[RMDB]
RNA sequence: GGGAACGACUCGAGUAGAGUCGAAAAGAUAUGGAUCGGAUGCUGGACCUGUGGACAUGCUGGACCGGGUCGGAAACGACCCUAGUACAGCAACAGCCACAGGUCCAGCCGCUCCGAUCCUAAGUCAGGAUGUUAAAUGGUUCGCCAUUUAACAUCCAAAAGAAACAACAACAACAAC
Reactivity to DMS in 0.01 (KOAc 150mM, MgCl2 10mM, bicine 150mM(pH8.5), 24C), signal-to-noise 1, nucleotides 027 to 126: g000a050u010a300u030g020g020a010u000c020g010g010a040u000g000c010u020g000g030a020c010c010u030g000u000g000g000a080c040a160u000g010c000u010g010g000a130c300c270g020g000g050u000c030g030g000a080a190a280c000g000a010c000c000c000u000a010g020u010a140c020a000g010c000a020a030c260a140g010c000c000a000c000a000g000g010u000c020c010a010g000c000c000g020c090u000c000c000g000a010u020c000c000u000a030a120g020u000c040a130
This 177-nucleotide RNA was probed chemically with DMS. The RNA was probed in 150 mM KOAc, 10 mM MgCl2 and 150 mM bicine (pH 8.5) at 24 C. DMS adducts were read by reverse transcription with MarathonRT. The DMS profile rests on 1,211 reads.